[RMDB]
RNA sequence: GGGAACGACUCGAGUAGAGUCGAAAAAUGAUAAGCAAAGUAAAGAGGCUUGCGUAAUUAUGACGCUACUGACAAAGAGACCAUGGUCUUCGUAUCGGAUGAAACGUGAGAUCCCAUUAAUGAAUGGCAUAAUGACUUGGUUCGCCAAGUCAUUAUGAAAAGAAACAACAACAACAAC
Reactivity to DMS in 0.01 (KOAc 150mM, MgCl2 10mM, bicine 150mM(pH8.5), 24C), signal-to-noise 5, nucleotides 027 to 126: a050u010g000a100u000a060a070g010c030a040a080a230g000u000a040a070a100g010a140g000g000c010u000u000g020c060g000u000a070a090u010u000a080u010g010a040c020g010c010u000a040c030u010g000a080c120a030a100a060g010a050g010a060c030c040a110u010g020g000u000c020u000u000c040g020u000a040u000c040g020g010a110u010g010a020a060a040c040g020u010g000a040g000a060u000c030c010c010a040u010u000a060a100u010g010a050a050u000g000g010
Reactivity to 2A3 in 0.01 (KOAc 150mM, MgCl2 10mM, bicine 150mM(pH8.5), 24C), signal-to-noise 4, nucleotides 027 to 126: a000u100g030a060u060a090a000g020c020a070a040a050g090u200a080a180a060g130a040g060g040c020u030u030g000c010g010u020a080a140u120u100a070u190g020a000c010g000c020u000a020c020u030g080a030c060a030a100a020g030a020g000a020c020c020a080u110g030g000u000c000u020u020c030g010u030a050u050c010g030g030a080u110g030a100a080a000c040g020u040g010a040g000a010u020c010c000c020a030u040u100a070a130u150g150a070a020u030g020g000